An RNA of 177 nucleotides, treated with 2A3 and DMS and read out base by base. Source: RMDB library 15KREP, as collected in RNAgym. The RNA was probed in 150 mM KOAc, 10 mM MgCl2 and 150 mM bicine (pH 8.5) at 24 C. The 2A3 profile rests on 1,125 reads. For DMS the reverse transcriptase was MarathonRT.
RNA sequence: GGGAACGACUCGAGUAGAGUCGAAAACGAGGCGAUAACUUCCAUAGUGUCUUAACAACAUUCAUUGACGCAGCACGAGGCCCCGCAGGUGUGGAGUCUGAUGUUGAGACCAAUGAAAUUGUUGACUGAGGGAACAUUAGUUCGCUAAUGUUCCCUCAAAAGAAACAACAACAACAAC
Reactivity to 2A3 in 0.01 (KOAc 150mM, MgCl2 10mM, bicine 150mM(pH8.5), 24C), signal-to-noise 1, nucleotides 027 to 126: c040g030a050g000g040c010g030a030u040a100a100c050u050u020c010c010a040u040a020g070u070g060u040c000u070u140a060a030c010a000a010c010a010u000u010c000a010u020u030g010a040c010g000c050a010g000c010a000c020g060a010g010g000c000c000c050c030g070c030a110g050g300u300g030u020g080g000a020g000u000c000u040g080a110u000g020u000u000g020a040g030a060c050c000a000a010u020g000a000a060a040u110u010g020u030u010g030a020c050u030
Reactivity to DMS in 0.01 (KOAc 150mM, MgCl2 10mM, bicine 150mM(pH8.5), 24C), signal-to-noise 1, nucleotides 027 to 126: c110g050a080g030g000c030g010a160u020a060a090c090u020u000c060c030a100u000a050g010u000g010u020c000u020u020a130a170c000a000a020c040a100u000u000c020a020u000u020g000a120c040g000c050a040g040c000a030c050g000a010g020g000c020c020c000c010g030c040a120g020g070u010g030u020g000g000a120g030u010c020u000g010a010u000g000u000u010g000a110g000a060c120c020a010a000u000g000a040a000a120u020u000g010u000u000g020a090c090u000